[RMDB]
RNA sequence: GGGAACGACUCGAGUAGAGUCGAAAAGAUAUGGAAAGGUUACUGGACGGUGUCGGAAACGACACUCGAUGGAAGGUACCUUUCCUAAGUCAAAACCGAACAGUUAAGUUCGCUUAACUGUUCGGAACUAAAACCGUAUGUUCGCAUACGGUUUUAGAAAAGAAACAACAACAACAAC
Reactivity to DMS in 0.01 (KOAc 150mM, MgCl2 10mM, bicine 150mM(pH8.5), 24C), signal-to-noise 5, nucleotides 027 to 126: g010a030u000a300u000g010g000a000a010a020g000g000u010u010a020c010u000g000g010a300c140g000g000u000g020u000c000g000g000a070a060a140c010g000a030c000a010c000u000c060g010a150u010g020g020a300a130g000g000u000a020c000c000u000u000u000c000c000u010a010a090g010u010c020a090a080a100a180c000c000g010a010a010c000a010g000u000u000a010a010g010u000u010c270g030c000u000u000a010a010c000u010g000u000u000c000g000g010a020a030
Reactivity to 2A3 in 0.01 (KOAc 150mM, MgCl2 10mM, bicine 150mM(pH8.5), 24C), signal-to-noise 3, nucleotides 027 to 126: g010a010u040a020u100g010g020a000a010a000g040g030u290u220a030c030u050g050g000a010c010g000g010u020g000u000c010g000g030a040a030a020c020g000a010c000a010c030u020c020g050a100u250g130g120a090a040g020g000u000a000c000c010u010u000u000c000c000u000a000a000g010u010c010a000a000a060a120c010c000g000a000a000c000a000g010u010u020a010a000g010u060u100c300g010c140u000u010a010a000c010u000g000u000u000c000g000g000a010a000